[RMDB]
RNA sequence: GGGAACGACUCGAGUAGAGUCGAAAAUCACGCCAGUUCGCUGGCGUGAAAAGGUCAAGACAAAAGUCUAAAGCCAAAAGGGAAAACCCAGAGCAAUGGCAAAAAGCGGUACCUUCGGGUACCGCAACAAUAGUAUCAUCUUCGGAUGAUACUAUUGAAAAGAAACAACAACAACAAC
Reactivity to DMS in 0.01 (KOAc 150mM, MgCl2 10mM, bicine 150mM(pH8.5), 24C), signal-to-noise 4, nucleotides 027 to 126: u010c000a000c000g020c000c000a000g010u000u010c230g040c010u000g000g000c000g040u000g000a010a020a070a100g010g010u000c070a220a040g000a040c020a090a100a100a130g020u000c010u000a030a130a200g010c010c010a030a060a110a110g010g000g010a080a060a110a110c020c000c020a110g010a120g010c080a060a130u010g000g000c060a070a040a080a090a080g010c000g010g010u000a000c000c000u000u010c170g030g010g020u000a000c000c000g010c000a010a000
Reactivity to 2A3 in 0.01 (KOAc 150mM, MgCl2 10mM, bicine 150mM(pH8.5), 24C), signal-to-noise 5, nucleotides 027 to 126: u010c010a010c000g010c000c000a010g000u040u040c150g060c110u000g000g010c000g000u000g000a000a000a000a000g020g010u140c040a020a030g020a040c030a030a300a030a080g010u020c030u090a130a060a050g000c000c020a020a020a040a060g030g020g020a040a140a030a070c000c010c010a010g010a010g030c060a100a130u090g060g000c020a050a050a020a080a010g000c010g000g000u000a000c000c000u010u080c170g040g000g000u000a000c020c000g000c000a000a000
About this RNA:
An RNA of 177 nucleotides, treated with DMS and 2A3 and read out base by base. The RNA was probed in 150 mM KOAc, 10 mM MgCl2 and 150 mM bicine (pH 8.5) at 24 C.